Structure probing data (2A3) for a 207-nucleotide construct. For 2A3, 555 sequencing reads were counted. The reactions ran in a buffer of 150 mM KOAc, 10 mM MgCl2 and 150 mM bicine (pH 8.5), at 24 C. Source: RMDB library OK3TST, as collected in RNAgym.
[RMDB]
RNA sequence: GGGAACGACUCGAGUAGAGUCGAAAAAAUGCAAAUACCUAUGCUUACAUGAAUGUGAGAUUGCCCGCUGCUAACCUUAUAGACACAUUUGUAAAUAUUGGCGCCAGAUGGUCACCUGAUGUAAUGGACUCUGUUAAUCCUUUUAACCACCACAGAACUGAUGUGAUCCUUUCGAGGAUCACAUCAGAAAAGAAACAACAACAACAAC
Reactivity to 2A3 in 0.01 (KOAc 150mM, MgCl2 10mM, bicine 150mM(pH8.5), 24C), signal-to-noise 2, nucleotides 027 to 156: a010a000u130g000c070a000a000a140u110a130c020c040u040a040u140g050c030u080u130a020c020a030u110g050a180a010u080g070u020g030a050g020a160u030u040g020c000c000c040g000c060u060g010c000u000a070a030c000c000u030u030a060u050a080g080a030c040a000c000a110u080u080u210g050u120a070a020a000u220a050u080u130g000g000c020g050c050c000a020g000a020u020g070g020u040c010a080c000c000u070g010a050u080g040u040a050a000u100g020g040a080c010u010c020u050g070u100u050a060a120u120c000c000u110u170u000u060a020a070c030c030a040c010c010a030c000a060g160a100a040